[RMDB]
RNA sequence: GGGAACGACUCGAGUAGAGUCGAAAACCUUGUGACCCCGGGCCCCUGCCGCCUGCAAGUCGAAAUUGCGCUGUGCUCCUGUGCUACGGCCUGUGGCUGGACUGCCUGCUGCUGCCCAACUGGCUGGCCCGUCAGUUUGGUUCGCCAAACUGACGGGAAAAGAAACAACAACAACAAC
Reactivity to 2A3 in 0.01 (KOAc 150mM, MgCl2 10mM, bicine 150mM(pH8.5), 24C), signal-to-noise 1, nucleotides 027 to 126: c040c020u030u080g120u060g080a110c020c000c020c010g020g020g090c000c050c000c000u040g040c000c000g010c010c030u040g040c100a030a000g030u080c000g080a030a080a100u040u130g040c020g000c010u020g030u050g040c060u050c060c010u030g010u010g060c000u040a020c000g010g000c000c000u040g040u060g050g010c000u000g060g010a030c040u060g060c010c020u040g000c010u030g000c000u010g020c000c000c010a000a010c050u040g030g030c000u000g020g040